[RMDB]
Chemical mapping of a 177-nucleotide RNA with DMS and 2A3.
For DMS the reverse transcriptase was MarathonRT.
Reactivities are given for positions 27 through 126.
DMS (dimethyl sulfate) methylates the pairing face of unpaired adenines and cytosines.
2A3 adducts were read by reverse transcription with SuperScript II with manganese.
For 2A3, 1,830 sequencing reads were counted.
RNA sequence: GGGAACGACUCGAGUAGAGUCGAAAAACGCCCCUUCAACCUUAGCAGUAGCGUGGGAUGAUUUCACAAUUAGAAAGACCUGCAUGAUGAGCUAGAGAAGAGGCUAGUGACGCAAGGCGUCGUGCAGCCUUUUCUCGCUGUUCGCAGCGAGAAAAGGAAAAGAAACAACAACAACAAC
Reactivity to DMS in 0.01 (KOAc 150mM, MgCl2 10mM, bicine 150mM(pH8.5), 24C), signal-to-noise 4, nucleotides 027 to 126: a140c270g000c020c000c010c090u000u020c050a090a110c070c050u000u000a070g030c040a110g040u000a100g020c100g020u010g000g010g000a100u010g010a150u000u010u000c040a050c140a130a110u020u010a140g000a040a050a090g010a100c090c000u000g000c010a070u000g010a140u010g000a080g010c000u000a070g010a080g000a020a030g010a040g010g020c000u000a090g000u000g010a020c010g020c060a120a140g040g000c010g030u000c010g020u000g000c100a100g000
Reactivity to 2A3 in 0.01 (KOAc 150mM, MgCl2 10mM, bicine 150mM(pH8.5), 24C), signal-to-noise 2, nucleotides 027 to 126: a000c040g070c000c010c000c000u050u100c020a050a090c020c010u060u070a010g020c020a070g030u200a030g030c040g060u050g000g030g000a090u070g050a070u040u070u080c060a070c070a130a280u140u040a100g110a070a050a000g060a030c010c000u020g040c020a020u060g040a070u080g050a020g010c020u030a010g000a020g010a130a000g010a030g000g000c020u010a040g080u070g100a010c050g030c190a190a130g150g030c000g000u010c000g030u060g040c010a010g010

The RNA was probed in 150 mM KOAc, 10 mM MgCl2 and 150 mM bicine (pH 8.5) at 24 C.